[RMDB]
RNA sequence: GGGAACGACUCGAGUAGAGUCGAAAAGCCGCUGACCACCGACGGCGACGGCGUGGUGCGCGGCGAAGGCCACAUCCGCGGCGGGACGCGCUGGAAGAACUACAACGUCGACGACGGCCGGUACGAACAUCACGUCCUAUUUCGAUAGGACGUGAUGAAAAGAAACAACAACAACAAC
Reactivity to DMS in 0.01 (KOAc 150mM, MgCl2 10mM, bicine 150mM(pH8.5), 24C), signal-to-noise 4, nucleotides 027 to 126: g010c020c000g000c060u020g010a040c000c010a140c030c020g000a100c000g000g010c080g000a050c010g000g000c300g030u000g010g020u000g020c080g010c020g020g000c020g020a080a100g010g010c030c020a050c040a160u000c180c130g010c060g010g000c030g010g010g000a080c050g020c030g000c010u000g000g010a140a110g000a170a070c030u010a040c050a040a300c030g000u000c010g010a050c010g000a130c030g010g000c090c070g000g000u000a030c040g010a100a170
Reactivity to 2A3 in 0.01 (KOAc 150mM, MgCl2 10mM, bicine 150mM(pH8.5), 24C), signal-to-noise 3, nucleotides 027 to 126: g030c020c000g000c180u120g060a040c020c010a020c000c030g040a010c020g040g000c010g000a010c020g000g030c030g000u010g000g020u100g020c070g000c020g000g000c030g000a020a010g200g000c020c010a040c030a130u080c110c120g040c040g060g000c020g020g050g020a040c030g020c000g000c030u080g060g130a090a080g040a120a010c020u060a030c050a070a030c020g020u020c010g000a030c010g000a000c010g020g010c060c090g000g010u030a060c040g020a040a010

Notes
The record gives the reactivity of an RNA of 177 nucleotides to DMS and 2A3. 2A3 adducts were read by reverse transcription with SuperScript II with manganese. The reactions ran in a buffer of 150 mM KOAc, 10 mM MgCl2 and 150 mM bicine (pH 8.5), at 24 C.